The data come from the RNA Mapping Database (RMDB), library OK2TST. The record gives the reactivity of an RNA of 177 nucleotides to DMS.
RNA sequence: GGGAACGACUCGAGUAGAGUCGAAAAGAGGGAAGGCGUCUCGCAAUCCUGCGGGAUGAAUCAUGAGUCAUUGACCGGCGCCCUCGCCGUGAGACUCAAUGAUGAUGAUCUGUCAUUCCUGACCAGAGUACUGAGUCGCCUUCGGGCGACUCAGUACAAAAGAAACAACAACAACAAC
Reactivity to DMS in 0.01 (KOAc 150mM, MgCl2 10mM, bicine 150mM(pH8.5), 24C), signal-to-noise 1, nucleotides 027 to 126: g000a150g010g000g060a090a000g000g010c020g000u000c000u000c020g000c060a090a220u020c240c190u010g000c000g040g040g010a010u000g000a030a050u000c010a030u000g030a070g000u000c000a200u000u000g010a080c300c010g020g040c020g010c100c100c300u000c000g010c000c010g000u000g000a130g000a070c070u000c000a000a010u020g000a040u000g000a120u000g000a100u010c180u010g010u010c000a110u000u000c040c000u010g000a200c070c050a090g000a120
For DMS the reverse transcriptase was MarathonRT. The RNA was probed in 150 mM KOAc, 10 mM MgCl2 and 150 mM bicine (pH 8.5) at 24 C.